Structure probing data (DMS and 2A3) for a 177-nucleotide construct. In probing experiments dimethyl sulfate is read out at A N1 and C N3, which are open when not base-paired. 2A3 adducts were read by reverse transcription with SuperScript II with manganese. For 2A3, 2,982 sequencing reads were counted. Reactivities are given for positions 27 through 126. For DMS the reverse transcriptase was MarathonRT. The DMS profile rests on 3,381 reads. The RNA was probed in 150 mM KOAc, 10 mM MgCl2 and 150 mM bicine (pH 8.5) at 24 C.
RNA sequence: GGGAACGACUCGAGUAGAGUCGAAAAGGUGAUAUUAUUGUCCAGCCCGCUUGCCGAUGCCGUCACCAGUUCAACCGGAACGCUCGCGCUGGCAUCCGGGUUAGCGGCCCGUAAUGCAGCAACGCGAGUCCAUUAGUACCUUCGGGUACUAAUGGACAAAAGAAACAACAACAACAAC
Reactivity to DMS in 0.01 (KOAc 150mM, MgCl2 10mM, bicine 150mM(pH8.5), 24C), signal-to-noise 3, nucleotides 027 to 126: g020g020u000g000a080u000a080u000u010a090u010u010g010u000c020c080a140g000c020c050c080g010c050u010u010g020c030c000g010a070u010g010c060c040g000u000c040a050c030c020a100g010u010u000c110a100a170c050c060g000g000a110a070c200g010c060u010c040g010c040g010c010u010g000g000c010a040u000c230c030g010g000g020u000u010a110g020c170g000g000c010c010c010g010u000a060a020u000g000c000a100g010c040a050a050c030g000c010g010a070
Reactivity to 2A3 in 0.01 (KOAc 150mM, MgCl2 10mM, bicine 150mM(pH8.5), 24C), signal-to-noise 2, nucleotides 027 to 126: g050g020u050g030a050u060a060u250u160a140u140u140g050u050c020c000a020g010c050c000c000g020c020u010u050g030c020c000g050a050u070g030c030c010g020u020c020a040c080c010a030g020u070u020c040a080a050c090c030g050g020a100a040c070g020c040u020c000g020c000g000c050u010g060g050c000a010u000c020c010g030g010g000u010u010a040g000c070g110g020c030c000c000g030u030a060a010u060g010c020a050g030c020a050a020c040g010c000g020a030